The record gives the reactivity of an RNA of 177 nucleotides to DMS and 2A3.

[RMDB]
RNA sequence: GGGAACGACUCGAGUAGAGUCGAAAAGAUAUGGACUAGGACAUGAAGAUAUGUCGGAAACGACAUAGCUUCAACAGCCUACAUGUCCUAAGUCAAACUGCACGAUCUGUUCGCAGAUCGUGCAGAAGGCCGAAUAUUAGUUCGCUAAUAUUCGGCCAAAAGAAACAACAACAACAAC
Reactivity to DMS in 0.01 (KOAc 150mM, MgCl2 10mM, bicine 150mM(pH8.5), 24C), signal-to-noise 2, nucleotides 027 to 126: g020a130u000a160u020g000g000a030c010u000a020g020g010a010c020a090u000g010a050a010g000a070u000a000u000g000u000c000g000g000a110a040a190c000g020a000c000a000u000a010g010c000u000u000c070a030a110c220a120g030c030c040u000a110c140a050u000g010u000c010c030u000a020a090g020u000c000a040a140a160c010u000g000c000a000c030g010a010u000c000u010g000u000u030c230g020c000a020g000a000u000c000g000u000g020c000a000g020a050a090
Reactivity to 2A3 in 0.01 (KOAc 150mM, MgCl2 10mM, bicine 150mM(pH8.5), 24C), signal-to-noise 1, nucleotides 027 to 126: g100a020u180a050u300g130g000a020c010u000a000g000g010a000c010a110u070g030a000a020g000a030u020a010u070g020u000c000g020g030a040a070a030c000g000a000c000a000u000a010g000c000u010u000c000a030a030c040a000g060c040c060u140a090c100a090u050g010u000c000c010u010a150a010g020u000c000a070a030a100c010u010g000c020a030c030g000a000u010c000u000g050u090u080c270g010c120a000g010a020u000c040g000u000g000c020a000g000a000a000

The data come from the RNA Mapping Database (RMDB), library TTRDEL. For 2A3 the reverse transcriptase was SuperScript II with manganese.